[RMDB]
RNA sequence: GGGAACGACUCGAGUAGAGUCGAAAAUCUUCGCCACAUAGCUGCCAACGGCAAUUGAUGUGAUUUGAGGAGCAAACACCCUGAGCAACCCCGAAAGGAGAGAGCUAUGUCUUUUGAAUUACCGGCACGGUAGGUAAGUGUUCGCACUUACCUACCGAAAAGAAACAACAACAACAAC
Reactivity to DMS in 0.01 (KOAc 150mM, MgCl2 10mM, bicine 150mM(pH8.5), 24C), signal-to-noise 4, nucleotides 027 to 126: u020c020u000u020c000g020c130c010a020c010a000u000a100g000c090u000g000c010c020a140a200c190g000g020c020a050a060u010u000g010a050u000g010u010g020a040u000u050u030g020a060g000g020a060g010c150a060a030a110c180a130c020c000c030u020g020a070g000c070a070a120c060c020c010c050g020a080a070a070g000g010a120g000a040g020a110g000c030u010a080u010g010u020c020u000u010u000u000g020a130a090u000u000a090c090c010g020g020c100a190
Reactivity to 2A3 in 0.01 (KOAc 150mM, MgCl2 10mM, bicine 150mM(pH8.5), 24C), signal-to-noise 6, nucleotides 027 to 126: u020c000u030u030c030g030c020c000a010c020a030u060a020g020c030u030g040c030c010a230a120c170g030g000c020a020a030u060u170g140a080u050g050u020g050a100u040u050u220g090a070g020g020a030g050c030a030a070a010c040a110c020c010c000u030g010a030g030c020a010a110c020c000c010c020g060a060a040a040g020g010a050g010a010g000a010g020c020u090a100u150g070u010c010u010u120u060u080g060a090a040u100u040a120c030c050g010g000c030a010
About this RNA
Conditions: 150 mM KOAc, 10 mM MgCl2 and 150 mM bicine (pH 8.5), 24 C. Structure probing data (DMS and 2A3) for a 177-nucleotide construct. Source: RMDB libraries RFM100 and RFMREP, as collected in RNAgym. For DMS the reverse transcriptase was MarathonRT.